An RNA of 177 nucleotides, treated with DMS and 2A3 and read out base by base. For 2A3 the reverse transcriptase was SuperScript II with manganese.
[RMDB]
RNA sequence: GGGAACGACUCGAGUAGAGUCGAAAAGGCUGGUCAUGACAUCGACAAACUUGGACUGCUGCUUGCAAAUGAUGCGGGUAAUUCGUAAUCUGUCUUCGUGGGUCAGUAGGUUGAGAUAGUUGUGCGCAGGCUUAAAUUGUUUCGACAAUUUAAGCCUAAAAGAAACAACAACAACAAC
Reactivity to DMS in 0.01 (KOAc 150mM, MgCl2 10mM, bicine 150mM(pH8.5), 24C), signal-to-noise 3, nucleotides 027 to 126: g020g020c040u000g010g010u060c030a060u010g010a060c130a040u010c030g010a170c110a050a060a060c050u020u010g000g020a100c100u000g010c060u000g020c070u000u000g000c040a010a080a090u010g030a060u000g000c040g020g010g010u030a070a170u030u000c070g000u000a070a030u000c020u000g000u010c110u000u000c100g020u020g020g000g000u010c090a050g000u000a050g000g000u000u010g000a070g010a060u010a080g000u000u030g000u000g010c080g010c130
Reactivity to 2A3 in 0.01 (KOAc 150mM, MgCl2 10mM, bicine 150mM(pH8.5), 24C), signal-to-noise 2, nucleotides 027 to 126: g000g040c030u020g000g020u050c000a010u040g040a070c000a030u030c010g050a030c130a020a150a020c060u090u050g030g050a080c000u000g030c030u020g050c020u020u130g000c000a000a000a280u120g080a030u030g020c000g000g000g050u120a170a070u150u000c000g000u010a020a130u030c010u020g110u050c000u090u050c080g000u050g000g060g040u070c010a020g020u100a080g060g040u020u070g010a030g020a060u130a130g020u020u020g010u040g000c070g000c100
It was measured as part of the RMDB libraries RFM100 and RFMREP. High 2A3 reactivity points to a flexible backbone, as in loops and unpaired stretches. Conditions: 150 mM KOAc, 10 mM MgCl2 and 150 mM bicine (pH 8.5), 24 C. Reactivities are given for positions 27 through 126.